[RMDB]
RNA sequence: GGGAACGACUCGAGUAGAGUCGAAAAGGGGUCGAGCAAUGAGAGUAAAGGAUCUUGGAUUUAUGACUGAAGCCUCCACGGUCAUUGUCAGAUCCGAUUGCUCGAGCUCGACGGAGGCACCCAAACAUUAGUUAUAUGUUCGCAUAUAACUAAUGAACAUUAGUUGUUUGUUCGCAAACAACUAAUGAAAAGAAACAACAACAACAAC
Reactivity to 2A3 in 0.01 (KOAc 150mM, MgCl2 10mM, bicine 150mM(pH8.5), 24C), signal-to-noise 7, nucleotides 027 to 156: g080g010g030g060u000c000g010a000g000c030a080a220u240g030a130g020a060g220u260a120a150a120g020g010a010u010c020u150u250g130g010a120u240u290u190a050u150g000a000c000u020g020a110a010g010c000c000u010c000c000a020c010g000g000u010c010a020u010u110g100u150c090a040g000a010u000c010c010g030a060u080u070g000c000u010c000g010a020g010c000u000c000g000a000c000g000g000a000g010g000c000a040c000c010c000a030a060a010c000a000u010u000a000g000u010u010a000u000a000u000g040u040u090c280g020c100a000u000a000u000a000a000c000u000a000a010u000g000a050a000
Reactivity to DMS in 0.01 (KOAc 150mM, MgCl2 10mM, bicine 150mM(pH8.5), 24C), signal-to-noise 3, nucleotides 027 to 156: g010g010g030g010u000c000g010a040g020c010a070a120u000g010a230g000a140g030u000a040a110a170g010g000a010u010c010u000u000g040g010a120u000u020u000a020u000g020a050c000u000g010a030a120g000c030c010u000c000c020a280c020g010g000u010c000a030u000u000g010u000c090a070g010a030u000c000c000g000a080u000u000g000c000u000c000g040a150g030c010u000c020g030a010c020g000g010a080g080g030c020a110c020c000c020a100a140a250c000a010u000u000a010g010u000u000a010u000a000u000g000u000u000c300g010c020a050u000a010u000a010a000c000u000a000a010u000g010a120a270
This 207-nucleotide RNA was probed chemically with 2A3 and DMS. DMS (dimethyl sulfate) methylates the pairing face of unpaired adenines and cytosines. Reactivities are given for positions 27 through 156. 2A3 adducts were read by reverse transcription with SuperScript II with manganese.